[RMDB]
About this RNA
Structure probing data (2A3 and DMS) for a 207-nucleotide construct. Source: RMDB library OK3TST, as collected in RNAgym. The reactions ran in a buffer of 150 mM KOAc, 10 mM MgCl2 and 150 mM bicine (pH 8.5), at 24 C. 2A3 adducts were read by reverse transcription with SuperScript II with manganese.
RNA sequence: GGGAACGACUCGAGUAGAGUCGAAAAGCUCCCACGUGAGUGGGAGCAUACCAUGUGAAUGGUAGAGCUCUGCAAAUCUAGUACAGGGAGGAAAACCCGUAGAGCACUCUACUCCGUUAGAUCGAGAGAUCGAGGAGUAGUGUGGAUGUACAGAUUCACUACACUAGUUGUUCGCAACUAGUGUAGUAAAAGAAACAACAACAACAAC
Reactivity to 2A3 in 0.01 (KOAc 150mM, MgCl2 10mM, bicine 150mM(pH8.5), 24C), signal-to-noise 4, nucleotides 027 to 156: g000c000u000c010c010c000a000c020g080u100g050a100g010u000g010g000g000a000g000c000a000u000a000c000c010a010u020g080u040g120a170a030u010g010g000u010a020g010a020g060c010u010c020u050g010c020a030a020a080u010c010u030a010g010u000a000c020a010g000g010g020a050g030g060a020a020a020a040c000c000c000g010u020a010g010a010g010c000a000c000u000c000u000a000c000u000c000c000g040u040u120a040g010a000u000c010g000a000g000a010g000a130u000c000g000a050g000g000a000g000u000a000g000u000g010u000g010g030a050u050g000u010a000c000a020g020a030u050u030c030
Reactivity to DMS in 0.01 (KOAc 150mM, MgCl2 10mM, bicine 150mM(pH8.5), 24C), signal-to-noise 4, nucleotides 027 to 156: g030c010u000c000c000c000a010c020g010u000g010a250g050u010g000g020g010a020g030c010a020u000a000c010c000a020u010g000u000g010a230a030u000g020g020u000a030g010a160g030c030u000c020u010g000c010a060a080a150u000c060u000a130g010u000a020c030a090g000g010g030a170g010g010a090a090a090a150c000c000c010g020u000a100g010a150g000c020a050c020u000c010u000a010c000u000c000c000g010u010u000a240g010a020u010c000g000a300g000a300g020a010u000c000g010a100g010g010a030g030u010a000g020u000g010u000g000g000a080u000g010u000a060c030a080g010a250u010u010c030